[RMDB]
Structure probing data (2A3 and DMS) for a 177-nucleotide construct. For DMS the reverse transcriptase was MarathonRT. For 2A3, 5,561 sequencing reads were counted. The RNA was probed in 150 mM KOAc, 10 mM MgCl2 and 150 mM bicine (pH 8.5) at 24 C. The DMS profile rests on 7,804 reads.
RNA sequence: GGGAACGACUCGAGUAGAGUCGAAAAGAGCGGCGUGAAGCUGCACCGGCUGGCCCUGACCAAUUACCGCGGCAUCGCACACCGUGACGUCGAAUUCCCCGAUCAUGGAGUGGUGGUGGUGUGCGGCCACUGUGCUGAUUUUCGAAUCAGCACAGUGAAAAGAAACAACAACAACAAC
Reactivity to 2A3 in 0.01 (KOAc 150mM, MgCl2 10mM, bicine 150mM(pH8.5), 24C), signal-to-noise 3, nucleotides 027 to 126: g110a010g010c020g050g000c040g010u140g160a120a000g010c030u030g020c010a030c010c010g030g020c040u050g040g020c000c000c000u040g000a090c020c040a050a120u150u110a070c020c020g010c020g050g000c010a030u050c030g020c000a070c010a000c070c000g020u070g080a030c040g050u090c040g020a030a120u060u080c000c010c000c020g030a060u090c040a080u140g100g030a120g040u070g030g120u040g010g030u020g020g010u030g010u030g040c000g000g000c010
Reactivity to DMS in 0.01 (KOAc 150mM, MgCl2 10mM, bicine 150mM(pH8.5), 24C), signal-to-noise 5, nucleotides 027 to 126: g000a130g010c020g010g000c030g010u010g000a100a160g020c030u000g010c050a070c070c050g000g020c030u000g010g020c020c030c020u000g000a090c050c060a090a090u010u010a110c070c030g010c050g010g010c030a050u010c020g010c010a050c010a030c010c000g010u010g010a060c110g000u000c040g010a090a220u000u000c020c010c000c070g000a080u010c060a060u010g000g010a110g000u000g000g020u000g010g020u000g010g010u010g000u000g000c010g020g000c190